Source: RMDB library OK1LIB, as collected in RNAgym. The record gives the reactivity of an RNA of 177 nucleotides to 2A3. Reactivities are given for positions 27 through 126. The 2A3 profile rests on 446 reads.
[RMDB]
RNA sequence: GGGAACGACUCGAGUAGAGUCGAAAAUGAUUUAAAUCAAACAUUUAUCACACCAAUUGAACGUGAAGAUAUUUUAUCAUUAUGUGAUGCAAUUGAUGAUGUUUUAGAUGCAAUUGAAGAAACGGCAGUUGGUGUGGUCGUUCGCGACCACACCAACAAAAGAAACAACAACAACAAC
Reactivity to 2A3 in 0.01 (KOAc 150mM, MgCl2 10mM, bicine 150mM(pH8.5), 24C), signal-to-noise 1, nucleotides 027 to 126: u080g090a120u070u000u300a090a070a100u000c000a010a070a170c000a020u020u000u170a030u030c000a000c000a000c040c000a000a060u060u050g030a060a000c010g000u110g000a020a030g010a070u100a230u010u300u200u160a000u000c000a000u010u000a060u060g100u070g100a120u070g010c000a000a000u000u000g070a040u050g030a100u000g030u000u000u000u080a030g060a020u050g030c000a010a040u040u060g000a010a010g090a000a260a000c070g080g030c030a000